[RMDB]
RNA sequence: GGGAACGACUCGAGUAGAGUCGAAAAGAUAUGGAUAUACGAGGAUCGAUGGGCCACAAUGAGUCGGAAACGAUGAGUGGCCAUCGGGAGUAUAUCCUAAGUCAAAAUCACCGGUUCGCCGGUGAAACCGACUGAUUAAGUUCGCUUAAUCAGUCGGAAAAGAAACAACAACAACAAC
Reactivity to 2A3 in 0.01 (KOAc 150mM, MgCl2 10mM, bicine 150mM(pH8.5), 24C), signal-to-noise 2, nucleotides 027 to 126: g030a010u070a020u140g000g000a000u000a020u000a030c040g080a290g050g070a030u030c000g000a010u010g150g300g200c000c010a030c030a110a300u300g030a040g140u000c020g000g040a020a080a040c030g010a020u110g030a020g030u000g000g000c000c000a000u010c000g010g000g010a040g010u000a000u000a000u000c010c000u000a120a000g020u020c020a000a000a000a300u060c000a010c000c000g000g040u080u060c300g050c110c000g050g000u000g000a010a000a000
Reactivity to DMS in 0.01 (KOAc 150mM, MgCl2 10mM, bicine 150mM(pH8.5), 24C), signal-to-noise 2, nucleotides 027 to 126: g000a020u000a300u010g000g070a010u000a000u010a000c000g020a110g010g000a080u010c000g000a030u000g050g040g010c030c010a040c000a170a130u000g020a220g000u000c000g000g000a180a050a170c000g010a010u000g000a150g010u000g000g000c000c000a000u010c000g030g000g040a050g020u000a000u000a020u000c000c000u000a020a060g000u000c030a090a110a060a210u000c000a000c000c000g000g000u000u010c220g050c000c000g000g010u000g000a000a070a040
Background: This 177-nucleotide RNA was probed chemically with 2A3 and DMS. As a SHAPE reagent, 2A3 marks flexible, mostly unpaired nucleotides at the ribose 2'-OH. The RNA was probed in 150 mM KOAc, 10 mM MgCl2 and 150 mM bicine (pH 8.5) at 24 C. For DMS, 1,503 sequencing reads were counted.